[RMDB]
RNA sequence: GGGAACGACUCGAGUAGAGUCGAAAAUUGAAGGUAAAACAGCCUGUGGGUGAAACACACCCACAAGGCCCAUUGGGCGCUAGCACUCUGGUAUCACGGUACCUUUGUGCGCCUGUUUUACCGAAGGGAAGGUUGACCUUCGGGUCAACCAAAAGAAACAACAACAACAAC
Reactivity to DMS in 0.01 (KOAc 150mM, MgCl2 10mM, bicine 150mM(pH8.5), 24C), signal-to-noise 3, nucleotides 027 to 129: u010u010g000a150a170g060g020u010a000a020a040a000c000a030g020c030c070u020g110u000g040g000g000u010g010a110a190a130c050a170c000a000c020c010c020a010c020a000a030g010g030c040c020c020a030u000u130g010g000g080c000g020c030u070a040g000c020a030c000u010c020u010g000g040u020a020u000c030a130c300g050g000u000a000c040c010u000u000u000g010u000g010c000g000c020c000u000g040u020u050u020u000a000c030c010g020a120a060g030g000g010a070a120
Reactivity to 2A3 in 0.01 (KOAc 150mM, MgCl2 10mM, bicine 150mM(pH8.5), 24C), signal-to-noise 4, nucleotides 027 to 129: u100u100g080a100a030g000g000u000a000a000a000a000c010a010g000c000c000u000g000u000g000g010g000u000g030a010a090a000c120a020c000a000c050c000c020a000c000a010a000g000g000c000c000c000a030u230u300g000g000g000c020g020c080u120a030g000c000a000c000u010c000u000g010g000u000a000u040c030a040c260g140g000u010a000c000c000u000u000u000g000u020g000c000g000c010c000u000g000u000u000u010u010a010c000c000g000a010a000g080g020g030a060a060
Structure probing data (DMS and 2A3) for a 170-nucleotide construct. 2A3 adducts were read by reverse transcription with SuperScript II with manganese. The 2A3 profile rests on 12,436 reads.